[RMDB]
RNA sequence: GGGAACGACUCGAGUAGAGUCGAAAAUGCUCCAAGAAGCGAUCGCGACUUCGGUCGAGGGCGGAUUUGUCGGUGUUGCUUCGAUCUAAGAGUUUAUUAAAGGUGGUCUUGUCGAGGUACUUGAGGGAUUUAGGGGUUCAUUCGUGAACCCCUAAAUAAAAGAAACAACAACAACAAC
Reactivity to DMS in 0.01 (KOAc 150mM, MgCl2 10mM, bicine 150mM(pH8.5), 24C), signal-to-noise 2, nucleotides 027 to 126: u010g000c040u010c030c060a110a150g000a120a070g030c020g020a040u010c070g010c000g010a040c020u000u010c120g020g010u000c020g010a060g020g010g030c050g010g000a120u010u010u010g030u000c040g030g010u010g010u010u000g020c030u000u000c020g000a070u000c090u010a070a070g010a070g000u000u010u000a080u030u020a040a090a100g010g020u000g000g010u000c010u000u000g010u000c030g000a070g020g000u000a050c070u010u000g000a100g000g010g000

The record gives the reactivity of an RNA of 177 nucleotides to DMS. The RNA was probed in 150 mM KOAc, 10 mM MgCl2 and 150 mM bicine (pH 8.5) at 24 C. DMS adducts were read by reverse transcription with MarathonRT. It was measured as part of the RMDB library OK2TST. Reactivities are rounded to 0.1 and cut off at 0 and 3.